Structure probing data (2A3) for a 207-nucleotide construct. The RNA was probed in 150 mM KOAc, 10 mM MgCl2 and 150 mM bicine (pH 8.5) at 24 C. 2A3 adducts were read by reverse transcription with SuperScript II with manganese. Values cover nucleotides 27 to 156. The data come from the RNA Mapping Database (RMDB), library RSTRND.

RNA sequence: GGGAACGACUCGAGUAGAGUCGAAAAGACGUCAUCGCUUAUAGGCUGCUCCGUUCACCAGAGCUCACUGGUGUUCGGCUAAGAUUAAAGAGCUCGCCUCUUGCACCCUGACCUUCGGGUCGCUUGAGGUUAAAUCAAUAGAAGGACACUAAGCAUGCAUAUCACGGGCGUUCGCGCCCGUGAUAUGAAAAGAAACAACAACAACAAC
Reactivity to 2A3 in 0.01 (KOAc 150mM, MgCl2 10mM, bicine 150mM(pH8.5), 24C), signal-to-noise 2, nucleotides 027 to 156: g130a040c080g070u130c080a130u190c030g100c150u230u290a100u120a200g120g040c030u040g010c010u000c010c000g000u020u000c010a000c000c000a010g010a070g020c000u000c020a270c080u010g010g000u030g010u030u000c000g000g020c010u010a010a010g020a170u130u300a140a110a030g020a000g020c030u020c000g010c000c000u000c010u000u000g050c000a000c000c000c050u030g060a020c000c010u000u010c020g000g020g000u000c010g010c010u010u000g000a000g000g000u000u000a000a020a020u090c050a000a000u000a000g000a000a000g000g040a000c000a050c010u170a160a030g110c030a140u110g000